[RMDB]
RNA sequence: GGGAACGACUCGAGUAGAGUCGAAAAGUAUUCAAAAGGCGGAACGACACCUAAAUCCGCAAGAAAGGUGUACGUGGCUUGUAAGACAUCUAACGCAUGGACAUAAUUGUGAUAAGGAUUUGGGGCGUGGUAGAUGGCUCGCAUCGCGAACAAAAGGACAAUAGCGUAGAUUCGUCUACGCUAUUGUAAAAGAAACAACAACAACAAC
Reactivity to DMS in 0.01 (KOAc 150mM, MgCl2 10mM, bicine 150mM(pH8.5), 24C), signal-to-noise 3, nucleotides 027 to 156: g020u000a070u000u000c060a080a080a100a070g020g010c020g020g010a100a120c040g010a120c020a060c040c000u000a030a070a100u000c050c050g000c070a090a100g000a100a180a060g010g020u000g000u010a060c050g030u010g060g020c030u000u000g000u000a080a090g030a070c020a030u020c030u000a030a100c070g010c030a100u010g010g000a120c040a020u010a050a110u000u000g030u000g000a130u000a060a120g000g000a100u000u000u010g020g000g010g000c060g010u010g000g020u010a060g010a050u010g000g010c040u000c070g020c020a060u010c020g010c070g030a100a060c040a110a030a070a150g030g000
Reactivity to 2A3 in 0.01 (KOAc 150mM, MgCl2 10mM, bicine 150mM(pH8.5), 24C), signal-to-noise 3, nucleotides 027 to 156: g010u030a090u070u130c070a060a050a020a040g060g000c010g020g030a060a010c050g040a020c010a030c010c000u040a050a050a000u040c030c030g010c090a020a020g060a030a040a000g040g010u030g010u050a080c020g010u010g040g020c040u040u030g030u070a060a010g020a020c010a030u010c020u070a090a000c050g020c040a030u120g050g010a040c020a040u170a060a100u170u080g060u060g050a080u060a140a070g030g020a030u050u030u080g030g020g000g020c050g000u020g000g000u010a040g010a080u030g010g000c040u030c010g020c000a050u050c040g000c030g060a060a000c070a060a090a020a010g100g020
Chemical mapping of a 207-nucleotide RNA with DMS and 2A3. Reactivities are rounded to 0.1 and cut off at 0 and 3. 2A3 adducts were read by reverse transcription with SuperScript II with manganese. The DMS profile rests on 5,744 reads. The RNA was probed in 150 mM KOAc, 10 mM MgCl2 and 150 mM bicine (pH 8.5) at 24 C. It was measured as part of the RMDB library OK3TST.